RNA sequence: GGGAACGACUCGAGUAGAGUCGAAAAGAUAUGGAAUGAUCAGCAGAAAUGCGCGUGGAACUACAUGAAUCACAUCGGAAACGAUGUGACAUGCCACGCGCAUUUCUGCUGAGUCAUUCCUAAGUCAGGCUAUGGUAUAGUUCGCUAUACCAUAGCCAAAAGAAACAACAACAACAAC
Reactivity to DMS in 0.01 (KOAc 150mM, MgCl2 10mM, bicine 150mM(pH8.5), 24C), signal-to-noise 1, nucleotides 027 to 126: g060a010u000a300u010g000g030a000a010u000g000a110u010c000a000g020c000a030g010a010a010a010u020g010c000g040c000g020u000g000g000a140a020c070u040a300c000a000u000g000a100a210u000c000a000c000a020u000c000g000g000a140a110a260c020g020a000u000g030u000g040a000c010a000u000g000c000c010a000c040g000c000g000c000a000u000u020u000c000u000g010c000u000g000a040g000u000c000a040u000u000c000c000u010a000a120g000u000c140a090